[RMDB]
This 177-nucleotide RNA was probed chemically with 2A3. It was measured as part of the RMDB library M2PK90. Reactivities are given for positions 27 through 126. 2A3 adducts were read by reverse transcription with SuperScript II with manganese. The RNA was probed in 150 mM KOAc, 10 mM MgCl2 and 150 mM bicine (pH 8.5) at 24 C.
RNA sequence: GGGAACGACUCGAGUAGAGUCGAAAAUAUUAGGGUGUGAGAGUAUCUCUCUCCCAGGCGGUUCGCGCAGCCAUCUUUUUCGACUUUACUUGGGUUAGCUGCGCGAACUGGCUGGCGUUCCCAGCAAGGCGAAUAGAUCUUUCGAGAUCUAUUCGCCAAAAGAAACAACAACAACAAC
Reactivity to 2A3 in 0.01 (KOAc 150mM, MgCl2 10mM, bicine 150mM(pH8.5), 24C), signal-to-noise 1, nucleotides 027 to 126: u110a030u050u070a020g000g000g000u000g030u020g000a020g010a030g030u250a300u140c080u000c010u000c000u000c030c000c040a040g020g070c010g000g000u030u000c010g000c010g040c020a000g040c030c070a100u140c140u030u070u030u080u060c030g040a030c000u100u140u260a040c000u130u090g080g000g040u040u070a000g020c010u010g000c020g000c000g010a020a010c010u010g020g030c000u010g000g010c000g000u000u000c000c010c000a000g010c020a060a050